An RNA of 177 nucleotides, treated with DMS and 2A3 and read out base by base. The reactions ran in a buffer of 150 mM KOAc, 10 mM MgCl2 and 150 mM bicine (pH 8.5), at 24 C. The DMS profile rests on 3,254 reads. DMS adducts were read by reverse transcription with MarathonRT.
[RMDB]
RNA sequence: GGGAACGACUCGAGUAGAGUCGAAAAGUUGGCCCUAUCUCUGCAUGUUGCGGGUUGCACCAUCGGCACUGUGGAGGCACACUCGGGUUGAUCUUUCGCAACAUCCAUCCAUAGUGCCUUGAAGACCGUGGCAUAUAAGGUUCGCCUUAUAUGCCACAAAAGAAACAACAACAACAAC
Reactivity to DMS in 0.01 (KOAc 150mM, MgCl2 10mM, bicine 150mM(pH8.5), 24C), signal-to-noise 2, nucleotides 027 to 126: g030u000u020g020g000c020c030c000u010a040u070c060u000c020u000g000c040a070u040g000u000u010g010c020g020g000g040u000u000g000c040a110c140c040a060u040c120g000g040c000a000c000u000g050u000g020g020a040g000g000c300a090c110a120c040u030c090g000g020g000u010u000g040a150u000c040u010u020u020c060g020c070a080a040c090a090u030c070c030a150u010c000c030a030u020a000g000u000g000c010c040u000u010g010a050a120g020a090c190c150
Reactivity to 2A3 in 0.01 (KOAc 150mM, MgCl2 10mM, bicine 150mM(pH8.5), 24C), signal-to-noise 4, nucleotides 027 to 126: g120u080u070g060g000c010c000c000u040a090u020c100u010c010u050g020c030a070u080g040u110u080g080c060g010g050g010u050u110g100c090a110c060c000a050u070c050g020g000c000a000c010u000g020u020g020g030a020g020g000c030a020c010a030c120u080c060g090g020g030u010u050g050a100u090c090u050u240u120c180g030c040a030a020c000a060u070c050c010a100u010c010c000a000u020a020g020u040g050c000c000u010u050g010a030a010g020a000c010c110
The data come from the RNA Mapping Database (RMDB), library OK1LIB.